Chemical mapping of a 207-nucleotide RNA with DMS and 2A3. Source: RMDB library RNAMAK, as collected in RNAgym. DMS adducts were read by reverse transcription with MarathonRT. For 2A3 the reverse transcriptase was SuperScript II with manganese. Conditions: 150 mM KOAc, 10 mM MgCl2 and 150 mM bicine (pH 8.5), 24 C. Reactivities are rounded to 0.1 and cut off at 0 and 3. For DMS, 4,417 sequencing reads were counted.
RNA sequence: GGGAACGACUCGAGUAGAGUCGAAAAGCGUACUACUCCCUAUAAUCAACUUUGUCAGGCUAUGUGAAAGACUCAUCCCAAAUAGGAUGAGGGGAGCAUAGCCUUGGAUUUAAGUUGGUAGGGAGUAUCGCAAAAUCGGAUACGUUCGCGUAUCCGAGUCCUUAUACUCGUUCGCGAGUAUAAGGACAAAAGAAACAACAACAACAAC
Reactivity to DMS in 0.01 (KOAc 150mM, MgCl2 10mM, bicine 150mM(pH8.5), 24C), signal-to-noise 2, nucleotides 027 to 156: g040c010g040u020a070c100u010a010c000u000c010c010c000u010a070u010a200a160u020c010a000a020c000u000u000u010g010u000c010a060g020g020c000u000a010u000g020u000g020a250a070a070g000a210c020u010c010a020u000c000c020c010a050a190a240u010a040g020g000a020u010g020a030g000g000g000g000a300g000c000a010u000a010g030c010c000u000u000g020g000a020u000u000u000a010a030g030u000u000g010g030u000a020g010g000g030a020g010u000a000u000c000g010c010a090a030a160a260u000c000g000g010a010u000a000c010g010u000u010c300g000c020g040u000a020u000c010c000g000a010
Reactivity to 2A3 in 0.01 (KOAc 150mM, MgCl2 10mM, bicine 150mM(pH8.5), 24C), signal-to-noise 3, nucleotides 027 to 156: g010c010g020u100a120c070u000a000c010u010c000c000c010u020a050u040a090a250u160c010a000a000c000u020u000u020g000u010c020a010g020g010c020u000a000u010g080u020g130a210a090a050g150a080c000u000c000a000u020c000c020c010a270a300a300u300a170g010g000a000u020g000a000g020g020g010g020a090g000c000a000u000a000g000c030c000u000u030g010g000a010u030u170u250a000a000g000u000u010g000g010u000a000g000g000g000a010g000u010a000u030c010g000c000a010a000a010a100u050c000g000g000a000u010a000c010g020u010u030c190g000c010g160u020a000u010c000c000g000a000